[RMDB]
RNA sequence: GGGAACGACUCGAGUAGAGUCGAAAAGGCGACAAGUUCGCUUGUCGCCACGGGGACCAGCCUGGAAAGGCUGGAGGUAUUGGAAUGGUCGGGCCGCCAUUCAACGCGGGACAUUCGUGUCCCGCAACUAAGCACGCAAAUUCGUUUGCGUGCUUAGAAAAGAAACAACAACAACAAC
Reactivity to DMS in 0.01 (KOAc 150mM, MgCl2 10mM, bicine 150mM(pH8.5), 24C), signal-to-noise 2, nucleotides 027 to 126: g000g010c000g010a030c000a000a010g000u000u000c220g030c000u010u000g000u000c000g010c010c000a020c150g020g000g000g030a300c010c000a020g010c000c030u000g010g040a120a130a030g000g000c010u000g000g000a020g000g010u010a080u020u000g020g000a040a010u000g010g000u010c060g000g000g010c030c150g020c000c000a010u000u000c010a140a140c170g000c000g000g010g000a020c000a080u000u010c180g000u010g030u000c000c000c000g010c010a010a020
Reactivity to 2A3 in 0.01 (KOAc 150mM, MgCl2 10mM, bicine 150mM(pH8.5), 24C), signal-to-noise 2, nucleotides 027 to 126: g010g010c010g000a000c000a000a000g020u010u120c130g050c110u000u010g000u000c000g000c000c000a010c010g110g000g010g010a000c010c000a000g010c000c000u040g090g110a150a080a030g030g000c000u000g020g040a010g030g040u120a140u130u300g110g010a020a010u010g030g030u060c090g040g040g000c000c020g000c000c000a000u000u010c010a020a050c100g010c000g000g000g010a000c000a010u040u050c220g040u030g000u040c000c020c010g000c000a000a000
Notes:
This 177-nucleotide RNA was probed chemically with DMS and 2A3. For DMS, 2,140 sequencing reads were counted. The reactions ran in a buffer of 150 mM KOAc, 10 mM MgCl2 and 150 mM bicine (pH 8.5), at 24 C.